An RNA of 177 nucleotides, treated with 2A3 and read out base by base. For 2A3, 482 sequencing reads were counted. Values cover nucleotides 27 to 126. It was measured as part of the RMDB library OK1LIB.
[RMDB]
RNA sequence: GGGAACGACUCGAGUAGAGUCGAAAAGCAGUGUACGCACUGCAAGCAAAAAUGUGAUCUUGCUUGUAAAUACAAUUUUGAGAGGUUAAUAAAUUACAAGUAGUGCUAUUUUUGUCCCUCUCUGCAACUGAGGAUGGCUGUUCGCAGCCAUCCUCAGAAAAGAAACAACAACAACAAC
Reactivity to 2A3 in 0.01 (KOAc 150mM, MgCl2 10mM, bicine 150mM(pH8.5), 24C), signal-to-noise 2, nucleotides 027 to 126: g000c000a000g000u000g070u080a020c200g020c040a000c000u000g000c000a000a000g000c000a000a000a120a000a000u140g030u090g270a200u000c090u060u090g000c000u000u000g000u000a000a020a020u300a060c040a110a300u020u030u160u060g030a090g000a000g010g110u070u150a070a000u170a090a210a030u100u000a010c060a090a010g000u000a000g100u040g170c060u090a060u010u040u060u020u010g050u050c000c000c000u000c000u000c000u020g010c070a050a020